[RMDB]
RNA sequence: GGGAACGACUCGAGUAGAGUCGAAAAGGGCGGUACCCAAGGCGUGUGAUGCAGUCCCCAUUGCCAGACCGCGUGAAGCUUUAGUGGUGAUUUUCAACAAAUUCAACAAGCUGUGACCAAACACCGCCUCCAAAACACCGUUCGCGGUGUUUUGGAGAAAAGAAACAACAACAACAAC
Reactivity to DMS in 0.01 (KOAc 150mM, MgCl2 10mM, bicine 150mM(pH8.5), 24C), signal-to-noise 1, nucleotides 027 to 126: g050g000g000c010g010g000u000a130c080c030c040a110a140g000g020c000g030u010g040u000g020a130u000g000c050a110g000u020c030c030c040c050a080u000u000g020c000c050a090g000a110c120c070g010c080g000u000g010a180a090g000c030u000u000u020a100g010u000g030g010u010g020a050u000u000u000u010c200a060a050c280a040a040a050u000u010c070a060a050c110a050a020g010c020u000g000u000g050a110c020c030a070a000a090c090a010c030c030g000c020
Structure probing data (DMS) for a 177-nucleotide construct.
Conditions: 150 mM KOAc, 10 mM MgCl2 and 150 mM bicine (pH 8.5), 24 C.